Chemical mapping of a 177-nucleotide RNA with DMS and 2A3. DMS adducts were read by reverse transcription with MarathonRT. For 2A3, 2,814 sequencing reads were counted. The reactions ran in a buffer of 150 mM KOAc, 10 mM MgCl2 and 150 mM bicine (pH 8.5), at 24 C. Source: RMDB library TTRDEL, as collected in RNAgym.
RNA sequence: GGGAACGACUCGAGUAGAGUCGAAAAGAUAUGGAUAUUUCAGCUUUUGACGAACUUGUCGGAAACGAUGGUUCGAUAAGCUGAAUAUCCUAAGUCAAAGAUGAUCAAGGUUCGCCUUGAUCAUCAACAGGAUAUGCGUGUUCGCACGCAUAUCCUGAAAAGAAACAACAACAACAAC
Reactivity to DMS in 0.01 (KOAc 150mM, MgCl2 10mM, bicine 150mM(pH8.5), 24C), signal-to-noise 1, nucleotides 027 to 126: g000a030u010a270u000g000g000a010u000a010u000u000u000c010a000g010c000u000u030u000u000g020a210c130g000a000a000c000u000u000g050u000c020g000g010a060a070a140c000g010a010u000g020g010u000u000c010g000a150u010a020a010g020c000u000g000a050a000u000a000u000c000c000u040a000a100g000u000c030a080a120a100g000a000u000g010a000u000c000a000a000g010g000u010u030c300g000c010c000u000u000g010a000u000c010a000u000c000a040a130
Reactivity to 2A3 in 0.01 (KOAc 150mM, MgCl2 10mM, bicine 150mM(pH8.5), 24C), signal-to-noise 3, nucleotides 027 to 126: g010a000u060a010u060g000g000a000u000a040u050u300u180c010a000g020c010u210u170u300u300g230a130c000g000a000a000c030u290u300g050u110c020g030g000a020a040a010c010g010a000u030g050g000u010u000c010g010a060u100a160a070g000c030u030g020a000a010u000a000u010c000c000u010a020a010g020u010c050a080a010a170g030a000u010g000a000u000c010a000a000g050g000u040u130c280g220c050c000u000u010g000a000u020c000a000u000c000a000a020